[RMDB]
RNA sequence: GGGAACGACUCGAGUAGAGUCGAAAAAUUGCUUGUGAAAAUCCAUUCAUGGUUAACCAAUUGGCUUAUAGCUCUAGUGCAAAUGGCAGCCUGGUUGGCACAACUUUGCAGGGCAAGCCUAUUGGUAGCCCAGAUUAAAGUUCGCUUUAAUCUGGGCAAAAGAAACAACAACAACAAC
Reactivity to 2A3 in 0.01 (KOAc 150mM, MgCl2 10mM, bicine 150mM(pH8.5), 24C), signal-to-noise 1, nucleotides 027 to 126: a000u110u080g030c020u020u060g020u010g030a130a050a040a050u080c020c010a050u010u050c010a030u060g040g080u110u090a040a030c000c000a010a000u000u020g000g000c000u030u060a070u280a300g010c000u000c060u010a030g270u050g100c010a030a000a000u060g100g020c030a010g010c020c000u100g250g030u000u160g000g000c000a010c000a050a080c030u010u000u030g020c000a020g010g010g020c000a000a000g000c000c000u000a000u000u000g000g000u000a010
Record summary
The record gives the reactivity of an RNA of 177 nucleotides to 2A3. The reactions ran in a buffer of 150 mM KOAc, 10 mM MgCl2 and 150 mM bicine (pH 8.5), at 24 C. 2A3 adducts were read by reverse transcription with SuperScript II with manganese. Source: RMDB library 15KREP, as collected in RNAgym. Reactivities are given for positions 27 through 126.